[RMDB]
RNA sequence: GGGAACGACUCGAGUAGAGUCGAAAAGAAGAGAACUUCGGUUCUCUUCAAAGCUGUUACCCACCCCAAGAAAUCCCGGAACAUUGGCUCGUUAGCGGGAGAAAACCGGGAAGUUCGCUUCCCGGAACCCUAAUAACAAGUUCGCUUGUUAUUAGGGAAAAGAAACAACAACAACAAC
Reactivity to 2A3 in 0.01 (KOAc 150mM, MgCl2 10mM, bicine 150mM(pH8.5), 24C), signal-to-noise 5, nucleotides 027 to 126: g000a000a000g020a010g000a010a000c020u060u090c230g030g000u000u000c000u020c000u010u000c000a000a000a000g020c050u070g090u150u110a170c000c010c010a030c010c000c000c000a030a010g050a100a120a030u010c000c010c010g020g010a030a010c010a070u080u200g170g030c050u040c090g020u050u030a110g160c000g020g070g010a010g030a010a050a010a020c000c000g000g000g000a000a000g000u030u060c180g020c110u000u010c000c000c000g000g010a000a000
Reactivity to DMS in 0.01 (KOAc 150mM, MgCl2 10mM, bicine 150mM(pH8.5), 24C), signal-to-noise 5, nucleotides 027 to 126: g000a020a000g000a020g010a010a000c000u000u020c170g040g010u000u000c000u000c000u000u000c010a030a130a100g020c130u010g010u020u000a100c010c010c010a300c030c010c000c020a110a150g000a080a120a120u000c010c010c000g010g010a030a010c040a090u000u010g010g010c140u010c190g010u000u000a050g010c020g000g000g000a050g000a080a040a140a130c000c010g000g000g000a020a010g000u000u010c170g010c010u000u000c000c000c000g000g000a030a020
Conditions: 150 mM KOAc, 10 mM MgCl2 and 150 mM bicine (pH 8.5), 24 C. The record gives the reactivity of an RNA of 177 nucleotides to 2A3 and DMS. For DMS, 5,535 sequencing reads were counted.